About this RNA: Structure probing data (2A3 and DMS) for a 207-nucleotide construct. Source: RMDB library OK3TST, as collected in RNAgym.
RNA sequence: GGGAACGACUCGAGUAGAGUCGAAAAACACCAUGGGCCGCUGCCAUGCCUAUAUUAAGCGGGUAUGGGUAUUUUGACAUAGUUAACGAGAUACCCUCGUAAGCGCUGAUAACCGCGUUUGCUAUUGCCGCUGUUUUACCUAUCUCAAACAUUUUGCAUGGGUACAUUACUUCGGUAAUGUACCCAUAAAAGAAACAACAACAACAAC
Reactivity to 2A3 in 0.01 (KOAc 150mM, MgCl2 10mM, bicine 150mM(pH8.5), 24C), signal-to-noise 1, nucleotides 027 to 156: a010c060a020c040c010a070u090g000g050g010c090c090g010c090u060g000c020c020a050u060g000c010c010u160a110u090a100u160u200a120a010g010c000g000g020g080u120a080u050g030g010g000u000a010u000u030u050u050g070a070c040a090u160a150g120u080u210a230a070c030g000a010g010a010u010a010c000c000c040u010c030g000u010a000a000g030c020g000c010u030g070a180u140a270a060c060c050g000c010g000u000u020u050g000c070u100a130u100u260g060c000c020g080c020u010g030u010u090u010u110a030c000c000u070a110u040c030u030c020a140a210a250c110a130u290u000u000u000g040c020
Reactivity to DMS in 0.01 (KOAc 150mM, MgCl2 10mM, bicine 150mM(pH8.5), 24C), signal-to-noise 2, nucleotides 027 to 156: a070c070a120c080c020a090u000g010g040g040c010c050g010c090u010g060c010c000a050u000g000c030c020u000a100u010a100u000u000a080a060g000c000g000g030g080u000a080u010g020g010g000u000a020u000u000u000u000g020a300c150a180u000a140g030u000u000a080a130c040g000a030g000a050u000a030c010c010c000u000c080g000u000a020a070g000c030g050c010u000g000a130u000a070a080c070c070g000c020g000u000u010u000g020c010u000a050u010u000g020c020c020g020c050u000g010u000u010u000u000a080c040c070u010a140u000c040u000c100a100a030a120c050a240u000u000u020u010g020c220

2A3 adducts were read by reverse transcription with SuperScript II with manganese.
Conditions: 150 mM KOAc, 10 mM MgCl2 and 150 mM bicine (pH 8.5), 24 C.